[RMDB]
RNA sequence: GGGAACGACUCGAGUAGAGUCGAAAAUCUAUGACCAGCCCAUGUUUACGACACGAAUGGGCUGUUGCAAAUUACGUAUAGCUCUUGCAACAUCGUGUCGAAACGUUCCCAAGCUAUACGCCACAAAACUAUCGGCUUGGUUCGCCAAGCCGAUAGUAAAAGAAACAACAACAACAAC
Reactivity to DMS in 0.01 (KOAc 150mM, MgCl2 10mM, bicine 150mM(pH8.5), 24C), signal-to-noise 1, nucleotides 027 to 126: u020c100u020a040u000g000a090c160c020a130g020c000c000c010a040u000g010u000u000u000a140c080g040a010c000a040c110g000a030a020u000g020g000g000c040u020g000u020u000g000c040a060a060a090u030u000a060c010g000u000a000u000a070g000c090u000c120u000u000g000c070a060a000c040a040u000c060g060u000g000u000c020g000a070a020a290c090g020u000u000c010c000c010a300a040g010c000u000a030u000a000c000g050c070c140a200c090a140a000a010
Reactivity to 2A3 in 0.01 (KOAc 150mM, MgCl2 10mM, bicine 150mM(pH8.5), 24C), signal-to-noise 1, nucleotides 027 to 126: u030c000u010a080u100g050a050c010c010a020g060c000c000c000a040u090g130u130u170u080a120c060g040a030c010a000c020g030a040a080u050g000g030g060c020u010g010u010u020g020c000a020a000a090u200u040a080c000g000u000a010u000a000g010c000u020c000u130u060g060c030a000a000c000a090u060c030g040u010g010u020c000g010a070a120a010c060g010u000u000c010c000c000a000a000g050c000u000a010u010a000c010g060c010c000a150c030a020a130a030